[RMDB]
RNA sequence: GGGAACGACUCGAGUAGAGUCGAAAAUGGUACUGGCAAGUUCUAUCGGACAGUGCAGGUCUAGAACCUUUGAGCAGCUUUUCCUUGCAUUUAGAAUAAAACCCAAACUUUGUGCAGGCCUACAAGGCAAGUACCCCAGAUUCGUCUGGGGUACUUGAAAAGAAACAACAACAACAAC
Reactivity to DMS in 0.01 (KOAc 150mM, MgCl2 10mM, bicine 150mM(pH8.5), 24C), signal-to-noise 3, nucleotides 027 to 126: u010g020g030u000a060c030u010g010g010c040a060a070g010u000u010c070u000a100u010c160g010g000a100c130a070g040u010g010c050a060g000g000u010c030u010a080g000a160a100c070c070u000u000u000g010a120g020c090a080g010c050u000u000u000u000c040c010u000u000g000c030a040u000u000u000a090g010a100a100u010a070a020a090a140c020c010c040a080a070a100c020u000u010u010g020u010g010c020a060g020g000c020c000u000a070c180a060a090g000g000
Reactivity to 2A3 in 0.01 (KOAc 150mM, MgCl2 10mM, bicine 150mM(pH8.5), 24C), signal-to-noise 1, nucleotides 027 to 126: u070g000g000u030a050c000u020g050g000c020a030a030g040u060u000c030u090a090u110c050g000g030a020c060a050g030u020g030c010a040g000g020u030c010u020a060g020a090a100c010c150u050u050u210g110a080g080c010a010g020c020u030u040u040u110c000c000u050u090g000c000a030u070u050u100a060g040a090a090u130a130a190a070a110c010c010c050a020a050a050c010u080u060u030g020u040g050c010a030g050g040c000c010u000a070c020a040a010g050g050
The data come from the RNA Mapping Database (RMDB), library OK2TRN.
Structure probing data (DMS and 2A3) for a 177-nucleotide construct.
Values cover nucleotides 27 to 126.
The RNA was probed in 150 mM KOAc, 10 mM MgCl2 and 150 mM bicine (pH 8.5) at 24 C.